[RMDB]
RNA sequence: GGGAACGACUCGAGUAGAGUCGAAAAAGGAGCCCCCAUGACGCUGGUGAACCAUCGCGAGCUGGGAGAGGAGAGGCGAAGAUAGCAGCGGAGACCCCGGUCCGAAUGCCCGUCGGCAGCAAACUCCAACGUCGUCUCUUCGGAGACGACAAAAGAAACAACAACAACAAC
Reactivity to DMS in 0.01 (KOAc 150mM, MgCl2 10mM, bicine 150mM(pH8.5), 24C), signal-to-noise 3, nucleotides 027 to 129: a030g010g020a060g050c020c040c020c000c080a160u000g020a080c150g080c000u050g050g000u030g020a040a090c080c000a060u000c060g000c080g000a170g030c070u100g030g000g030a000g010a040g010g020a070g010a030g010g040c060g020a080a040g000a070u000a060g040c140a010g030c130g000g000a110g040a220c050c060c040c000g030g030u040c040c040g030a060a120u030g030c040c040c030g090u000c040g020g060c110a100g000c080a040a030a140c030u050c000c000a070a100c190
Reactivity to 2A3 in 0.01 (KOAc 150mM, MgCl2 10mM, bicine 150mM(pH8.5), 24C), signal-to-noise 3, nucleotides 027 to 129: a020g070g000a030g030c000c000c000c000c010a040u150g020a020c030g000c090u040g000g040u030g050a050a050c030c020a050u030c030g020c050g040a020g020c040u050g000g020g010a050g000a010g030g010a000g030a010g000g000c040g010a020a010g020a020u150a020g010c110a000g020c020g060g020a020g040a100c000c010c000c010g030g010u000c000c010g030a070a020u070g020c000c000c000g030u030c000g010g020c000a010g000c010a080a030a050c020u020c030c020a050a040c080

The record gives the reactivity of an RNA of 170 nucleotides to DMS and 2A3. The DMS profile rests on 10,896 reads. DMS adducts were read by reverse transcription with MarathonRT. It was measured as part of the RMDB library 15KLIB. Conditions: 150 mM KOAc, 10 mM MgCl2 and 150 mM bicine (pH 8.5), 24 C.